Chemical mapping of a 207-nucleotide RNA with DMS and 2A3. Values cover nucleotides 27 to 156. The reactions ran in a buffer of 150 mM KOAc, 10 mM MgCl2 and 150 mM bicine (pH 8.5), at 24 C. 2A3 is a SHAPE reagent: it acylates the 2'-hydroxyl of flexible nucleotides of all four kinds. For 2A3, 660 sequencing reads were counted. It was measured as part of the RMDB library M2RFPK. For 2A3 the reverse transcriptase was SuperScript II with manganese.
[RMDB]
RNA sequence: GGGAACGACUCGAGUAGAGUCGAAAAGUAUCCCUAGAUGAUAAAACACCGCACAUGGCUCGUAAGAGCGGUUAAAUUAGCAAGUAAUGCAAAUUACGAGAGGUAACGCAUGGCCUAGGCUCGUUAGAAAAGGGAGAAUCCUUCGGGAUUCUCCCAAGGUAUGGUAUCACUUCGGUGAUACCAUACCAAAAGAAACAACAACAACAAC
Reactivity to DMS in 0.01 (KOAc 150mM, MgCl2 10mM, bicine 150mM(pH8.5), 24C), signal-to-noise 1, nucleotides 027 to 156: g010u000a140u000c020c000c010u020a150g000a130u000g020a160u000a010a080a070a100c050a100c050c000g000c090a180c120a180u030g040g020c010u000c070g020u010a050a070g040a100g060c040g030g010u000u010a020a060a090u000u000a140g050c120a070a270g000u000a070a070u010g030c040a070a080a210u000u020a050c000g000a090g000a080g000g030u020a040a040c160g020c120a050u000g000g000c040c000u000a160g030g030c040u000c050g030u000u070a290g000a060a070a120a180g000g000g000a020g030a000a010u000c000c010u000u010c300g040g020g040a010u000u000c000u020c000c000c020a000a010
Reactivity to 2A3 in 0.01 (KOAc 150mM, MgCl2 10mM, bicine 150mM(pH8.5), 24C), signal-to-noise 1, nucleotides 027 to 156: g120u100a060u110c000c000c000u000a080g050a190u140g010a110u300a050a110a020a000c050a000c060c000g060c000a000c000a050u090g120g000c040u000c010g050u050a000a110g050a000g050c050g010g000u050u110a060a240a010u070u020a000g010c030a080a000g070u110a130a040u120g000c010a000a020a150u090u110a020c040g000a020g000a000g060g090u090a050a000c030g010c110a060u060g040g030c000c010u020a050g040g050c020u000c020g020u050u060a050g030a010a110a080a040g020g000g000a000g010a000a000u030c000c000u030u030c150g030g000g000a000u000u000c000u020c030c000c000a000a000